[RMDB]
RNA sequence: GGGAACGACUCGAGUAGAGUCGAAAACUGGUGACGGGGAAGGACUCGGUCAUCGAGGUGCGUGUCGAUCACGCUCUCGCGGAGGCGCGUCAGCAGACGACGUCGCUGCGUCAGCUGCUCGCGGAGAUCGAGCGGCAGCGCGGCGGCAACCCCGGAGUACCUUCUUAAAGUUCGCUUUAAGAAGGUAAAAAGAAACAACAACAACAAC
Reactivity to 2A3 in 0.01 (KOAc 150mM, MgCl2 10mM, bicine 150mM(pH8.5), 24C), signal-to-noise 3, nucleotides 027 to 156: c030u040g080g050u060g070a010c020g000g000g040g010a020a100g140g020a070c030u010c040g070g060u070c030a090u060c030g020a000g000g100u170g010c000g000u010g080u260c140g050a180u300c000a010c000g010c010u010c000u000c010g030c050g030g000a060g040g090c030g000c010g060u000c000a060g040c030a040g080a130c060g030a040c090g000u000c000g000c020u010g000c000g010u050c050a060g000c010u020g010c010u020c000g030c080g080g050a110g020a130u120c000g000a000g000c000g000g000c000a010g000c000g010c000g010g000c020g000g000c000a000a000c010c000c000c000g000g000a030g050
Reactivity to DMS in 0.01 (KOAc 150mM, MgCl2 10mM, bicine 150mM(pH8.5), 24C), signal-to-noise 2, nucleotides 027 to 156: c050u010g010g020u000g010a140c010g030g010g010g000a150a250g050g000a090c020u000c030g020g010u000c030a070u000c000g010a030g010g000u000g050c060g030u000g000u000c160g000a300u000c000a020c030g000c000u000c020u000c020g070c100g000g010a110g000g020c040g010c090g000u010c030a160g010c090a180g010a060c020g010a100c050g030u000c010g000c020u000g000c000g020u000c010a260g010c020u000g020c020u000c010g020c050g010g000a220g020a170u000c010g010a010g000c020g010g010c000a120g000c010g010c010g000g000c010g020g010c000a040a030c020c010c010c020g000g010a200g000
The record gives the reactivity of an RNA of 207 nucleotides to 2A3 and DMS.
The DMS profile rests on 3,121 reads.
For 2A3 the reverse transcriptase was SuperScript II with manganese.
The 2A3 profile rests on 1,889 reads.